Annotation: Source: RMDB libraries RFM100 and RFMREP, as collected in RNAgym. Chemical mapping of a 177-nucleotide RNA with DMS and 2A3. The reactions ran in a buffer of 150 mM KOAc, 10 mM MgCl2 and 150 mM bicine (pH 8.5), at 24 C. DMS adducts were read by reverse transcription with MarathonRT. For 2A3, 3,351 sequencing reads were counted. Values cover nucleotides 27 to 126.

RNA sequence: GGGAACGACUCGAGUAGAGUCGAAAAGCGCUCGUGGUUAGUUCGGCCGUCUUGUAUCACGCGAGCGUUUGUAUACCCGUGCGACUCAAGGCGGCGGAACUAGUCACGAGCGCCCUUCCAUCGGAGCCAUGGAUCCUUGAUUCGUCAAGGAUCCAUGAAAAGAAACAACAACAACAAC
Reactivity to DMS in 0.01 (KOAc 150mM, MgCl2 10mM, bicine 150mM(pH8.5), 24C), signal-to-noise 1, nucleotides 027 to 126: g000c000g010c000u000c020g020u000g010g020u000u000a000g010u000u000c020g010g040c000c000g000u020c010u000u000g020u020a120u000c000a030c000g010c020g050a060g010c210g010u000u020u020g020u040a050u060a030c010c000c000g040u010g020c050g000a000c060u010c000a000a010g010g000c030g010g030c010g010g010a010a000c000u000a000g000u000c010a020c000g000a000g000c000g000c000c000c000u000u010c000c010a170u010c090g000g000a180g020c150
Reactivity to 2A3 in 0.01 (KOAc 150mM, MgCl2 10mM, bicine 150mM(pH8.5), 24C), signal-to-noise 3, nucleotides 027 to 126: g000c010g000c000u010c000g000u000g030g030u010u010a000g010u010u000c070g240g000c000c000g000u000c000u000u000g010u000a010u010c000a000c050g020c020g060a120g090c090g060u010u010u100g030u020a080u120a020c000c010c000g000u010g000c000g000a000c010u000c010a000a000g000g000c000g000g000c000g000g000a010a000c000u000a000g000u000c000a000c000g000a000g010c000g000c000c000c000u000u000c010c000a080u090c120g060g060a060g050c010